Chemical mapping of a 170-nucleotide RNA with 2A3 and DMS.
For DMS, 9,416 sequencing reads were counted.
[RMDB]
RNA sequence: GGGAACGACUCGAGUAGAGUCGAAAAACGUUGAUAUGGAUUUACUCCGAGGAGACGAACUACCACGAACAGGGGAAACUCUACCCGUGGCGUCUCCGAUUGACGAGUAAGUCCUAAGUCAACAUGCAGGCCAGAAGCUUCGGCUUCUGGAAAAGAAACAACAACAACAAC
Reactivity to 2A3 in 0.01 (KOAc 150mM, MgCl2 10mM, bicine 150mM(pH8.5), 24C), signal-to-noise 4, nucleotides 027 to 129: a010c070g000u010u000g010a000u000a000u030g000g000a000u010u000u020a010c000u000c000c010g010a050g000g010a000g030a000c020g010a030a010c090u280a080c070c000a000c000g010a060a020c040a090g010g000g000g000a000a000a010c010u030c000u000a030c020c030c010g000u000g000g000c000g000u010c000u010c000c000g000a010u010u040g000a000c000g010a000g000u000a000a010g000u010c000c000u000a000a000g010u010c000a000a000c000a000u100g070c040a030g090g070
Reactivity to DMS in 0.01 (KOAc 150mM, MgCl2 10mM, bicine 150mM(pH8.5), 24C), signal-to-noise 3, nucleotides 027 to 129: a000c190g000u010u010g000a030u030a070u050g020g030a000u000u000u000a030c010u020c040c000g010a080g000g030a010g000a030c020g000a050a030c070u150a300c100c000a100c000g030a070a170c120a190g080g000g080g100a010a020a050c010u040c010u020a080c140c200c010g010u020g010g000c010g000u020c000u010c020c000g010a010u020u050g030a110c300g020a000g010u030a000a040g010u040c000c010u010a010a030g000u000c050a050a000c020a080u070g020c150a110g070g050
For 2A3 the reverse transcriptase was SuperScript II with manganese. The reactions ran in a buffer of 150 mM KOAc, 10 mM MgCl2 and 150 mM bicine (pH 8.5), at 24 C.